The data come from the RNA Mapping Database (RMDB), library OK2TRN. Chemical mapping of a 177-nucleotide RNA with DMS and 2A3. Conditions: 150 mM KOAc, 10 mM MgCl2 and 150 mM bicine (pH 8.5), 24 C. The 2A3 profile rests on 3,761 reads. Values cover nucleotides 27 to 126.
[RMDB]
RNA sequence: GGGAACGACUCGAGUAGAGUCGAAAAGAGUCACUGACAGUCACACACUGUGAGAGAGAGAGUCACUGACACACUGUGUGUGAGUGAGAGUCUCAGACACAGAGAGAGAGUCAGAGUCACACUCACACAGUCGUGAGAAUUUCGAUUCUCACGACUGAAAAGAAACAACAACAACAAC
Reactivity to DMS in 0.01 (KOAc 150mM, MgCl2 10mM, bicine 150mM(pH8.5), 24C), signal-to-noise 4, nucleotides 027 to 126: g000a070g020u010c040a110c050u010g020a050c040a080g010u000c040a140c100a170c120a100c040u010g000u000g000a080g000a160g030a050g000a060g000a140g030u000c010a060c020u000g000a050c040a060c070a190c180u000g000u020g030u000g010u000g010a010g020u000g010a040g010a110g010u000c000u010c010a030g010a100c020a020c020a020g000a080g000a100g010a130g010a130g030u000c010a030g000a060g000u000c020a100c070a070c010u000c010a060c130a070
Reactivity to 2A3 in 0.01 (KOAc 150mM, MgCl2 10mM, bicine 150mM(pH8.5), 24C), signal-to-noise 2, nucleotides 027 to 126: g030a000g010u030c020a000c080u020g030a040c000a040g080u040c020a030c000a010c010a010c140u030g010u030g000a080g020a010g010a000g000a000g000a030g120u000c020a030c070u050g080a000c010a010c020a020c110u140g090u070g000u000g010u000g250a010g000u010g000a010g000a030g010u000c000u000c000a040g050a020c020a000c030a020g060a000g000a000g000a000g000a010g130u020c030a010g020a020g090u000c000a040c000a000c050u020c000a030c000a010